An RNA of 177 nucleotides, treated with 2A3 and DMS and read out base by base. The RNA was probed in 150 mM KOAc, 10 mM MgCl2 and 150 mM bicine (pH 8.5) at 24 C. It was measured as part of the RMDB library OK2TRN.
RNA sequence: GGGAACGACUCGAGUAGAGUCGAAAAUCACCGGCGAUUUGGCCGAUAAGGGCGAACCGGCGGCAUACCGCAAGCUCCGAGGCCUGGUCGAGCCGUUCGCGGCGCAGUUGGGCGCCGAGCUCGUCUGUCAUUCUACAAUUUUCGAAUUGUAGAAUGAAAAAGAAACAACAACAACAAC
Reactivity to 2A3 in 0.01 (KOAc 150mM, MgCl2 10mM, bicine 150mM(pH8.5), 24C), signal-to-noise 6, nucleotides 027 to 126: u070c030a030c110c010g040g000c030g020a050u060u040u130g040g000c010c000g000a010u080a100a120g010g010g000c020g010a040a030c030c010g020g000c010g110g090c090a100u220a160c020c000g000c030a030a020g000c010u000c030c020g030a050g000g000c000c000u020g000g020u030c030g030a050g040c010c000g050u050u050c080g000c010g030g000c010g000c010a070g080u260u240g160g100g000c010g000c010c000g000a010g010c030u040c020g090u040c080u090g080
Reactivity to DMS in 0.01 (KOAc 150mM, MgCl2 10mM, bicine 150mM(pH8.5), 24C), signal-to-noise 9, nucleotides 027 to 126: u000c070a140c070c000g010g010c020g010a070u000u000u000g010g020c010c010g010a130u010a100a090g000g010g010c010g000a080a160c300c020g010g010c040g010g010c220a080u010a100c020c010g010c040a070a300g010c010u000c020c020g010a150g000g010c010c010u000g000g010u000c020g000a060g010c040c010g010u000u000c040g020c010g010g000c010g030c010a140g010u010u010g010g010g010c000g010c010c020g000a040g010c050u000c030g010u000c050u000g010